RNA sequence: GGGAACGACUCGAGUAGAGUCGAAAACAGUAAGAACACAACAGGUCAUCUUAAGUGUGAUUCAGAUGAGACUGCAUUCAGUGUCAUGGAGGGAACACACACAUAUAGGCCUCACAUGAGCUUUGAACGUGCUGAUUACUUUCGAGUAAUCAGCACGAAAAGAAACAACAACAACAAC
Reactivity to DMS in 0.01 (KOAc 150mM, MgCl2 10mM, bicine 150mM(pH8.5), 24C), signal-to-noise 2, nucleotides 027 to 126: c050a090g050u000a040a070g020a070a120c070a050c050a060a210c240a000g020g000u000c000a070u000c170u000u000a230a090g000u000g010u000g010a200u000u000c050a050g000a020u000g000a000g000a030c020u000g000c220a040u040u020c080a020g040u000g000u000c000a010u010g020g010a150g000g020g000a030a020c090a060c020a030c010a040c140a050u000a150u000a140g000g000c020c000u000c040a060c180a110u000g000a090g020c020u000u000u000g030a040a200
Reactivity to 2A3 in 0.01 (KOAc 150mM, MgCl2 10mM, bicine 150mM(pH8.5), 24C), signal-to-noise 3, nucleotides 027 to 126: c030a000g080u120a170a040g120a220a010c070a000c020a140a140c010a050g010g050u020c000a040u000c060u110u050a090a020g010u000g020u030g090a180u040u000c030a000g010a160u010g010a000g040a030c010u010g030c030a120u140u170c030a010g030u020g120u050c000a010u040g080g120a120g070g080g060a070a000c040a010c010a010c020a000c030a070u150a000u040a200g030g090c000c000u020c010a070c000a050u090g020a030g090c050u120u100u090g050a070a000
The record gives the reactivity of an RNA of 177 nucleotides to DMS and 2A3. The DMS profile rests on 1,076 reads. The reactions ran in a buffer of 150 mM KOAc, 10 mM MgCl2 and 150 mM bicine (pH 8.5), at 24 C. Source: RMDB library OK2TRN, as collected in RNAgym.